[RMDB]
RNA sequence: GGGAACGACUCGAGUAGAGUCGAAAAGUGAGCACCAGACGAGAACGAAUGCAGCGGACGUCCGACAGCUGAUCAGGUCGAAGAAGGCGCUGUCGCCGCGCGCCGCGCCCUCUUUUAUCCAUUUGAACAUGCCGUAUGCAUUCGUGCAUACGGCAUGAAAAGAAACAACAACAACAAC
Reactivity to DMS in 0.01 (KOAc 150mM, MgCl2 10mM, bicine 150mM(pH8.5), 24C), signal-to-noise 2, nucleotides 027 to 126: g000u000g030a090g010c000a110c040c020a090g020a060c030g000a110g010a090a090c030g000a010a070u000g000c120a040g030c030g010g000a080c030g000u010c190c020g000a040c100a110g000c070u000g010a060u100c090a120g020g000u010c070g030a080a020g020a050a030g000g040c030g030c000u000g000u000c040g000c000c110g010c100g020c020g000c040c140g000c020g000c000c010c030u040c000u000u010u030u010a100u010c040c180a040u030u000u020g000a050a130
Reactivity to 2A3 in 0.01 (KOAc 150mM, MgCl2 10mM, bicine 150mM(pH8.5), 24C), signal-to-noise 3, nucleotides 027 to 126: g130u100g000a060g000c020a020c020c020a010g030a110c030g010a020g030a110a070c020g020a090a050u080g040c010a010g020c040g030g010a030c030g050u040c000c000g030a020c050a020g070c000u040g030a140u110c030a060g000g090u080c060g010a030a040g050a090a040g040g000c030g000c000u020g020u050c010g040c090c020g060c010g030c010g000c000c000g000c000g000c000c020c000u030c010u020u020u030u050a060u030c040c040a130u070u060u240g090a030a050